This 177-nucleotide RNA was probed chemically with DMS and 2A3. Reactivities are rounded to 0.1 and cut off at 0 and 3. Source: RMDB library OK2TST, as collected in RNAgym. The reactions ran in a buffer of 150 mM KOAc, 10 mM MgCl2 and 150 mM bicine (pH 8.5), at 24 C. DMS adducts were read by reverse transcription with MarathonRT.
RNA sequence: GGGAACGACUCGAGUAGAGUCGAAAAAACAAAGGAUGCCAUUGUUGCAAUAGAGACAGUGCUUCCAGGUGAAUUGAAUGAUUGGGUUUUCACACCUGACAUGCUUGAUGUCGGAUCCAAUAAUGCACGUCCAGAGAAAGUUCGCUUUCUCUGGACGAAAAGAAACAACAACAACAAC
Reactivity to DMS in 0.01 (KOAc 150mM, MgCl2 10mM, bicine 150mM(pH8.5), 24C), signal-to-noise 2, nucleotides 027 to 126: a110a040c100a070a090a130g000g010a020u000g030c140c010a010u000u000g040u000u010g000c180a130a190u000a090g010a150g010a000c010a020g010u000g020c080u000u030c010c050a020g030g040u000g010a070a100u040u000g000a050a060u010g030a170u000u020g010g000g010u030u010u000u000c160a070c080a080c040c020u000g000a000c020a050u000g000c010u000u010g000a010u000g030u000c000g090g000a130u000c040c000a100a090u010a100a090u020g010c230a090
Reactivity to 2A3 in 0.01 (KOAc 150mM, MgCl2 10mM, bicine 150mM(pH8.5), 24C), signal-to-noise 1, nucleotides 027 to 126: a000a050c130a020a030a030g030g010a010u050g090c090c000a000u020u000g070u020u040g060c100a210a170u110a300g060a000g000a050c010a000g000u000g020c000u020u000c000c000a000g130g030u050g030a050a120u170u080g050a070a070u100g090a160u160u250g000g000g160u010u000u110u100c060a050c000a010c010c010u000g000a000c000a000u010g010c010u050u020g030a000u210g070u000c000g000g000a010u000c010c010a000a110u170a020a030u080g130c080a000